Overview:
This 177-nucleotide RNA was probed chemically with 2A3 and DMS. The reactions ran in a buffer of 150 mM KOAc, 10 mM MgCl2 and 150 mM bicine (pH 8.5), at 24 C. 2A3 adducts were read by reverse transcription with SuperScript II with manganese.
RNA sequence: GGGAACGACUCGAGUAGAGUCGAAAAUGAGACAGGUUGGUUGCUAUCUAAUGGAUGUGUUAGUAGUCUGAGGGGAAGGUGGCUCCAGUACGAGAGGAACGAGUUGUCGGCGCCUCUGGUCGACCGGCCACCUCACAAAAUUCGUUUUGUGAGGUGGAAAAGAAACAACAACAACAAC
Reactivity to 2A3 in 0.01 (KOAc 150mM, MgCl2 10mM, bicine 150mM(pH8.5), 24C), signal-to-noise 6, nucleotides 027 to 126: u200g010a040g030a030c050a040g000g060u030u050g020g030u040u070g050c010u040a090u120c020u060a080a060u080g110g050a090u080g130u020g030u110u070a040g010u020a030g030u020c050u050g030a050g010g020g010g020a030a040g040g020u030g020g000c000u000c000c020a040g030u050a040c040g010a010g010a030g080g020a050a030c020g000a030g060u020u020g060u070c010g010g020c040g060c000c000u000c000u020g040g010u020c010g020a070c000c000g010g000
Reactivity to DMS in 0.01 (KOAc 150mM, MgCl2 10mM, bicine 150mM(pH8.5), 24C), signal-to-noise 5, nucleotides 027 to 126: u020g010a090g000a060c100a070g020g000u000u010g000g020u010u000g010c040u000a070u020c030u000a050a060u010g000g010a090u040g020u010g000u000u000a050g000u000a050g010u010c050u000g000a100g000g010g000g000a080a050g000g000u000g000g000c040u010c040c080a060g010u010a080c070g000a110g000a090g000g000a100a090c130g010a060g010u010u000g010u010c010g010g000c150g000c020c010u000c020u000g000g000u010c030g010a100c080c060g010g000